[RMDB]
RNA sequence: GGGAACGACUCGAGUAGAGUCGAAAACGGGUUGGCGAUCUUCUCGCCUGUCGACAGGACAGCAAAGUCCUUCACACCCAGGUCCACCCCGACCGCGCUGCCGGUCUCGGGCUGCGGUUCGGGGUCGUCCACAUAGUCCUUUCGAGGACUAUGUGGAAAAAGAAACAACAACAACAAC
Reactivity to 2A3 in 0.01 (KOAc 150mM, MgCl2 10mM, bicine 150mM(pH8.5), 24C), signal-to-noise 8, nucleotides 027 to 126: c020g000g000g000u070u070g020g000c020g020a030u060c140u210u070c060u150c020g000c000c000u020g070u040c030g000a030c050a090g000g020a000c010a040g140c110a300a150a020g010u010c000c000u020u000c010a030c000a010c010c000c000a010g010g090u020c000c000a010c010c010c000c000g000a000c000c010g000c010g260c300u110g020c010c000g060g130u160c150u120c120g080g000g000c010u040g000c000g000g050u070u120c010g000g000g010g000u000c000g010
Reactivity to DMS in 0.01 (KOAc 150mM, MgCl2 10mM, bicine 150mM(pH8.5), 24C), signal-to-noise 4, nucleotides 027 to 126: c120g020g000g010u010u010g010g010c030g000a020u020c260u030u040c220u000c020g000c010c010u010g010u010c110g030a040c230a020g010g000a000c000a140g020c300a090a160a110g000u000c000c000u000u000c030a050c090a200c020c010c000a130g010g000u000c000c020a090c000c000c000c000g010a010c010c000g000c010g000c110u020g010c030c000g020g010u020c180u030c060g000g000g020c010u020g020c000g030g000u020u010c000g020g000g020g010u000c040g000